[RMDB]
RNA sequence: GGGAACGACUCGAGUAGAGUCGAAAAUUUUUCUUCCAGACACCCACUGCUCGAGGACGUCCUCCCUUCCCCCUCGAGCCUUCUUCGAGUCGGACCGGCUCAUCUCGGCAGAGGGCGGCAGUCCUGGUACGCUGACUCUUCGGAGUCAGCAAAAGAAACAACAACAACAAC
Reactivity to 2A3 in 0.01 (KOAc 150mM, MgCl2 10mM, bicine 150mM(pH8.5), 24C), signal-to-noise 4, nucleotides 027 to 129: u070u070u010u020u020c070u070u030c070c040a060g010a020c010a090c020c070c010a100c050u000g000c020u000c000g000a000g010g070a180c010g010u030c000c020u030c000c000c000u020u020c000c000c000c000c000u010c000g030a040g020c040c000u100u100c030u020u050c030g020a010g010u000c010g010g060a060c060c040g050g000c010u000c030a030u010c050u030c010g040g000c080a000g010a020g050g050g000c000g000g000c000a010g010u030c010c000u010g060g000u070a030c060
Reactivity to DMS in 0.01 (KOAc 150mM, MgCl2 10mM, bicine 150mM(pH8.5), 24C), signal-to-noise 2, nucleotides 027 to 129: u000u000u000u000u000c160u040u010c030c060a220g020a000c000a140c000c000c000a190c070u020g020c050u020c020g040a020g040g020a210c080g000u030c000c080u010c060c020c010u030u040c000c000c010c010c150u010c000g030a070g000c000c000u030u000c040u020u000c060g080a050g040u030c070g000g010a120c090c050g010g040c050u030c080a110u020c020u030c090g000g000c010a120g030a000g010g000g010c110g020g040c110a040g020u030c040c010u100g020g050u050a130c130
Source information:
An RNA of 170 nucleotides, treated with 2A3 and DMS and read out base by base. 2A3 adducts were read by reverse transcription with SuperScript II with manganese.